[RMDB]
This 177-nucleotide RNA was probed chemically with DMS and 2A3. The reactions ran in a buffer of 150 mM KOAc, 10 mM MgCl2 and 150 mM bicine (pH 8.5), at 24 C.
RNA sequence: GGGAACGACUCGAGUAGAGUCGAAAAAAUGGUUUUUUAGACUCAUAUGUAUGGAAACUUCUAGGAUGGGGACCAUAUUUCACUUCCUUUUAAUACAGUACCCAGUAUAGCACAAUUUGCAGUUAUGGAGAGUCUGUAAAUUCGUUUACAGACUCUCAAAAGAAACAACAACAACAAC
Reactivity to DMS in 0.01 (KOAc 150mM, MgCl2 10mM, bicine 150mM(pH8.5), 24C), signal-to-noise 3, nucleotides 027 to 126: a060a070u040g010g010u020u000u010u010u010u010a170g020a050c050u000c030a070u000a030u000g000u000a050u020g000g020a100a210a130c050u000u010c040u010a110g020g020a090u010g000g000g000g000a210c100c040a030u000a060u000u000u000c100a040c120u010u000c010c000u010u000u000u000a070a070u000a020c050a020g020u010a070c040c020c020a080g010u000a070u010a090g030c060a040c110a080a070u000u000u000g010c030a090g000u010u010a090u010g010
Reactivity to 2A3 in 0.01 (KOAc 150mM, MgCl2 10mM, bicine 150mM(pH8.5), 24C), signal-to-noise 2, nucleotides 027 to 126: a000a020u130g050g000u080u070u010u030u020u050a060g020a050c030u010c110a040u080a040u300g060u040a040u060g020g060a040a020a110c040u070u040c050u140a100g170g000a080u060g020g020g000g030a000c010c010a010u020a080u090u080u060c050a080c030u060u050c020c000u060u200u020u140a110a090u070a020c030a030g030u050a050c020c010c010a000g030u050a060u080a060g000c030a010c020a130a150u060u040u150g000c020a040g030u170u100a080u150g050

The DMS profile rests on 2,140 reads. Source: RMDB library OK2TRN, as collected in RNAgym. For 2A3, 1,580 sequencing reads were counted.